RNA sequence: GGGAACGACUCGAGUAGAGUCGAAAACUCUGCAUAUUCGUAUGCAGAGAAAUAAGGGUCGGCUCAUGCAGCUAGUCGAACAUGCUGCUCGACCUUUUGGUAAAAACCGGAGGUUCGCCUCCGGUAAGGUAUUGAGGUAAUUCGUUACCUCAAUACCAAAAGAAACAACAACAACAAC
Reactivity to 2A3 in 0.01 (KOAc 150mM, MgCl2 10mM, bicine 150mM(pH8.5), 24C), signal-to-noise 3, nucleotides 027 to 126: c000u000c000u000g000c010a010u010a040u080u090c170g090u010a000u000g000c010a000g000a000g010a020a060a000u160a010a010g000g000g010u000c000g010g000c020u040c190a030u120g010c000a010g000c010u100a040g140u210c060g020a050a030c020a020u080g010c000u020g000c030u040c030g010a000c010c010u010u040u030u040g040g020u100a010a020a020a030a030c000c010g000g000a000g010g030u080u090c180g050c040c000u010c000c000g000g000u000a000a000
Reactivity to DMS in 0.01 (KOAc 150mM, MgCl2 10mM, bicine 150mM(pH8.5), 24C), signal-to-noise 5, nucleotides 027 to 126: c000u000c000u010g010c000a010u000a020u000u010c170g020u010a000u000g000c000a010g010a010g000a030a050a060u000a030a020g000g000g000u000c000g010g000c070u000c070a030u000g010c030a300g010c030u000a140g010u010c140g010a100a300c050a030u000g000c100u000g000c020u010c020g010a010c000c000u000u000u010u010g000g020u010a080a040a040a080a030c000c000g000g010a030g010g020u000u020c200g010c000c000u000c000c000g000g010u000a000a030
Chemical mapping of a 177-nucleotide RNA with 2A3 and DMS. For 2A3, 4,838 sequencing reads were counted. For DMS, 8,496 sequencing reads were counted. Conditions: 150 mM KOAc, 10 mM MgCl2 and 150 mM bicine (pH 8.5), 24 C. As a SHAPE reagent, 2A3 marks flexible, mostly unpaired nucleotides at the ribose 2'-OH. Source: RMDB library M2PK50, as collected in RNAgym.